[RMDB]
RNA sequence: GGGAACGACUCGAGUAGAGUCGAAAAAGUAGUAAAGAAAAGGCAGGUUGCUUACCUGGCUUCCCUGGCAGCGCUGCAACGGAAUUCAGGGCACGGAGUCGGUGCCAGAUCGUGCGGCUUCGGCGCCGGGUCAUAUAAUGUUCGCAUUAUAUGACCCAAAAGAAACAACAACAACAAC
Reactivity to 2A3 in 0.01 (KOAc 150mM, MgCl2 10mM, bicine 150mM(pH8.5), 24C), signal-to-noise 1, nucleotides 027 to 126: a000g130u170a010g050u090a050a110a120g060a070a170a030a000g050g030c010a000g000g050u060u070g110c080u140u110a030c010c010u000g100g000c010u030u040c010c000c010u020g030g050c030a030g040c070g000c050u010g030c030a090a090c050g040g080a010a050u180u080c050a100g100g020g000c030a000c030g070g010a060g060u100c060g050g020u050g010c000c010a010g030a050u110c050g010u050g010c000g000g020c000u070u080c040g040g000c050g000c010c020
Reactivity to DMS in 0.01 (KOAc 150mM, MgCl2 10mM, bicine 150mM(pH8.5), 24C), signal-to-noise 4, nucleotides 027 to 126: a090g010u010a100g020u010a080a080a100g010a070a040a080a060g030g000c000a030g010g010u000u000g000c180u010u010a090c020c030u000g000g010c040u000u000c020c010c020u010g010g010c060a090g020c200g010c020u010g000c040a060a070c110g010g000a090a120u000u000c080a100g010g010g020c040a030c010g020g010a070g000u000c030g010g020u000g010c000c020a050g000a050u000c100g010u010g000c020g000g010c010u000u010c050g010g010c090g020c040c070